[RMDB]
RNA sequence: GGGAACGACUCGAGUAGAGUCGAAAAAUCGGCCAUCACCCGGUCGGGUUGCAGCAUCCGCCACAGAACAAAGCGGACGACUACGCCACCUCGCGGACAUGCGGAAUCUCCCGCCGCCGUCGUGGUCUGCUACACAAUGCUUCGGCAUUGUGUAGCAAAAAGAAACAACAACAACAAC
Reactivity to 2A3 in 0.01 (KOAc 150mM, MgCl2 10mM, bicine 150mM(pH8.5), 24C), signal-to-noise 2, nucleotides 027 to 126: a000u090c020g020g010c010c000a070u050c010a080c000c020c030g000g050u070c000g000g000g000u090u020g030c040a030g030c000a030u010c000c000g000c020c030a090c030a060g250a160a010c100a120a110a020g030c010g000g020a020c010g010a080c000u210a100c080g010c030c000a010c000c000u050c030g020c010g030g030a040c040a100u290g010c010g000g020a040a050u070c030u020c060c000c010g010c030c010g020c000c020g070u190c040g000u040g000g060u010c050
Reactivity to DMS in 0.01 (KOAc 150mM, MgCl2 10mM, bicine 150mM(pH8.5), 24C), signal-to-noise 2, nucleotides 027 to 126: a010u030c010g000g000c030c000a060u010c140a140c060c090c010g000g050u030c030g010g010g010u000u030g010c090a090g000c070a150u030c000c000g000c030c100a290c150a130g010a210a030c100a150a160a140g000c010g010g010a030c050g000a040c060u000a080c010g000c000c050a090c020c020u040c020g010c030g000g020a070c140a050u020g000c020g000g020a090a030u080c090u020c000c000c090g000c010c000g000c030c070g000u010c030g000u020g000g030u000c140
Structure probing data (2A3 and DMS) for a 177-nucleotide construct. The DMS profile rests on 1,715 reads. It was measured as part of the RMDB library OK1LIB. For DMS the reverse transcriptase was MarathonRT. The RNA was probed in 150 mM KOAc, 10 mM MgCl2 and 150 mM bicine (pH 8.5) at 24 C.